[RMDB]
An RNA of 177 nucleotides, treated with 2A3 and DMS and read out base by base. Values cover nucleotides 27 to 126. Source: RMDB library TTRINS, as collected in RNAgym. Reactivities are rounded to 0.1 and cut off at 0 and 3. 2A3 adducts were read by reverse transcription with SuperScript II with manganese.
RNA sequence: GGGAACGACUCGAGUAGAGUCGAAAAGAUAUGGAGAAUCUCUAGCGUCAUGCUAAUGCGAAGAACUUAUUCGGAAACGAAUAAGGGAGCAUUAGCAUGACGAACUACUAGAUCUUCUCCUAAGUCACUUUACAUGUAACUUCGGUUACAUGUAAAGAAAAGAAACAACAACAACAAC
Reactivity to 2A3 in 0.01 (KOAc 150mM, MgCl2 10mM, bicine 150mM(pH8.5), 24C), signal-to-noise 3, nucleotides 027 to 126: g030a020u130a060u190g000g000a010g000a000a000u000c010u000c000u050a010g010c010g000u000c000a000u020g000c000u010a000a000u010g010c030g300a300a010g010a100a060c010u000u000a010u000u000c010g040g020a050a090a090c020g000a010a010u000a010a010g040g010g000a020g010c000a010u010u000a000g000c000a000u000g000a010c000g000a010a000c000u110a000c000u000a000g000a010u010c030u010u000c000u000c000c000u020a130a030g050u000c000a010
Reactivity to DMS in 0.01 (KOAc 150mM, MgCl2 10mM, bicine 150mM(pH8.5), 24C), signal-to-noise 5, nucleotides 027 to 126: g010a050u010a300u010g000g000a020g010a010a010u000c220u000c000u000a000g000c000g000u000c000a000u000g000c000u000a000a000u000g000c000g030a150a180g010a140a200c000u000u000a000u000u000c000g010g010a140a110a230c000g010a020a010u000a010a010g000g000g030a050g010c000a000u000u000a000g000c000a010u000g000a000c000g010a000a010c060u020a300c000u000a010g010a010u000c230u000u000c000u000c000c000u020a040a130g000u000c030a260